Conditions: 150 mM KOAc, 10 mM MgCl2 and 150 mM bicine (pH 8.5), 24 C. Structure probing data (2A3 and DMS) for a 177-nucleotide construct. 2A3 is a SHAPE reagent: it acylates the 2'-hydroxyl of flexible nucleotides of all four kinds. It was measured as part of the RMDB library TTRDES. DMS adducts were read by reverse transcription with MarathonRT.

[RMDB]
RNA sequence: GGGAACGACUCGAGUAGAGUCGAAAAGAUAUGGAAAUCUUCACGGAAUUCAGCUAUUUCGGAAACGAAAUAACUGGGAGAUGUGAAGGAUUUCCUAAGUCAAAAUCAGCUGCUUCGGCAGCUGAAAUCAGUAAUAAGCGUUCGCGCUUAUUACUGAAAAAGAAACAACAACAACAAC
Reactivity to 2A3 in 0.01 (KOAc 150mM, MgCl2 10mM, bicine 150mM(pH8.5), 24C), signal-to-noise 2, nucleotides 027 to 126: g000a010u030a000u070g000g000a010a030a030u000c000u030u000c000a000c020g140g300a300a300u190u040c040a000g000c000u000a010u010u010u030c010g000g080a040a020a030c010g010a000a000a000u020a000a010c000u020g000g100g260a130g040a150u080g000u060g000a010a030g030g000a000u000u000u000c010c010u010a040a000g010u000c000a070a040a080a300u080c000a000g000c010u020g030c010u050u180c300g200g020c020a020g030c000u000g000a000a010a000
Reactivity to DMS in 0.01 (KOAc 150mM, MgCl2 10mM, bicine 150mM(pH8.5), 24C), signal-to-noise 2, nucleotides 027 to 126: g000a060u010a300u010g010g000a020a020a010u010c000u000u000c000a000c000g000g020a300a230u010u000c000a010g010c020u000a000u000u000u010c000g010g010a090a100a120c000g010a010a010a010u000a000a000c000u000g000g010g000a090g000a300u020g020u000g000a020a030g050g000a030u010u000u000c000c010u010a010a070g000u000c030a130a120a190a200u000c000a010g010c000u000g000c000u000u000c300g030g010c000a000g010c010u010g000a000a040a080

For 2A3, 2,307 sequencing reads were counted.